RNA sequence: GGGAACGACUCGAGUAGAGUCGAAAAGGCAGGGGCGCCGCGCCCCCUGGUGGCCCCCGCAGGGAUCGCAGGCAGGAGCUGGGCCUGAGUCCGUCUCAGCUUAUCUAUUCAUUUAUUUUUAUUAUGACAUUGGACAUUUAUUCGUAAAUGUCCAAUGAAAAGAAACAACAACAACAAC
Reactivity to 2A3 in 0.01 (KOAc 150mM, MgCl2 10mM, bicine 150mM(pH8.5), 24C), signal-to-noise 1, nucleotides 027 to 126: g040g010c010a010g000g010g020g000c040g030c000c000g000c010g030c000c030c000c010c020u020g070g010u050g170g040c000c000c010c000c010g000c020a010g000g000g010a040u060c030g000c070a010g020g000c020a030g050g040a020g030c030u100g000g000g030c000c020u000g010a010g040u000c000c010g030u020c020u000c020a000g000c000u100u050a050u060c030u060a140u090u050c020a020u080u100u210a150u150u140u130u030u090a210u120u070a060u120g010a000
Reactivity to DMS in 0.01 (KOAc 150mM, MgCl2 10mM, bicine 150mM(pH8.5), 24C), signal-to-noise 4, nucleotides 027 to 126: g010g000c020a050g010g010g010g020c060g020c040c040g020c110g020c080c020c010c030c010u000g000g000u000g020g010c030c010c010c020c060g040c040a090g010g010g000a070u000c060g000c030a050g000g010c040a090g020g000a080g010c030u000g010g010g010c030c020u010g000a160g010u000c050c050g000u000c020u000c010a060g020c060u000u010a060u010c020u000a100u010u010c010a040u000u000u000a060u020u010u020u010u010a090u030u010a080u020g000a170